[RMDB]
RNA sequence: GGGAACGACUCGAGUAGAGUCGAAAAUGGUCAAGGGCAGCAACCACUUAGCUCCCAAGGCAUGUGCCUCAGCUGGCAUUUCGUCACAAUCAACAGUAAGUGGUAGCUUGAGUCACUGUGAGGUCACCACCAUUUGAUCCUUCGGGAUCAAAUGGUGAAAAGAAACAACAACAACAAC
Reactivity to 2A3 in 0.01 (KOAc 150mM, MgCl2 10mM, bicine 150mM(pH8.5), 24C), signal-to-noise 3, nucleotides 027 to 126: u120g000g000u030c030a060a080g010g070g000c060a010g010c010a060a040c020c010a040c050u090u100a020g030c020u020c000c060c000a000a020g070g000c010a020u100g020u020g030c000c000u040c040a040g040c070u030g020g010c000a000u000u050u020c060g070u060c020a030c070a190a190u170c030a040a140c040a070g080u120a090a030g020u010g090g300u020a010g000c010u080u170g020a000g030u030c010a010c070u020g030u020g090a070g010g060u070c040a030c060
Reactivity to DMS in 0.01 (KOAc 150mM, MgCl2 10mM, bicine 150mM(pH8.5), 24C), signal-to-noise 2, nucleotides 027 to 126: u010g020g000u000c050a110a150g020g030g000c090a050g010c070a130a090c050c070a030c070u000u010a110g000c080u000c000c030c020a080a160g020g030c000a070u000g000u000g010c070c010u010c050a060g000c000u000g010g000c020a080u000u000u000c070g030u000c120a120c180a070a050u000c220a050a020c130a070g010u020a010a040g050u000g020g050u010a030g010c030u010u020g010a020g010u000c030a020c020u010g010u000g010a090g000g010u010c030a080c170

Overview:
An RNA of 177 nucleotides, treated with 2A3 and DMS and read out base by base. Source: RMDB library OK2TST, as collected in RNAgym. For DMS, 1,724 sequencing reads were counted. 2A3 adducts were read by reverse transcription with SuperScript II with manganese.